[RMDB]
RNA sequence: GGGAACGACUCGAGUAGAGUCGAAAAUGGUGGUCUCUGGUAAAUUGGUCCGUAAAUGGGCUCGGUGGGUGCCUGCGUUUGCCACAGGUUGCCUGGGUGGGUCCCAGAGCGGGUGGGUGCGUGGUGGCGAUAUAUAAUUAUUCGUAAUUAUAUAUCGAAAAGAAACAACAACAACAAC
Reactivity to DMS in 0.01 (KOAc 150mM, MgCl2 10mM, bicine 150mM(pH8.5), 24C), signal-to-noise 9, nucleotides 027 to 126: u020g010g020u010g000g000u000c020u010c040u000g000g010u020a030a070a110u030u020g010g010u000c010c020g000u010a050a090a110u050g010g000g000c020u010c080g010g010u010g000g000g010u010g000c040c010u000g010c080g010u010u030u020g020c060c050a170c040a050g010g000u010u020g040c030c010u000g000g000g020u030g000g000g000u010c020c010c010a070g000a110g020c090g000g000g010u040g000g000g010u010g000c080g010u010g000g010u010g010g010
Reactivity to 2A3 in 0.01 (KOAc 150mM, MgCl2 10mM, bicine 150mM(pH8.5), 24C), signal-to-noise 8, nucleotides 027 to 126: u100g020g010u020g000g020u020c020u000c020u060g060g030u080a090a110a110u120u120g040g000u020c010c000g030u060a030a050a240u180g020g000g000c030u030c030g030g040u070g020g030g010u030g020c010c000u020g010c030g060u050u110u160g060c030c010a040c010a020g050g000u090u150g030c000c000u030g030g030g090u190g030g020g020u060c000c000c020a020g010a020g020c050g000g030g070u160g030g010g000u060g030c050g010u050g020g030u040g040g000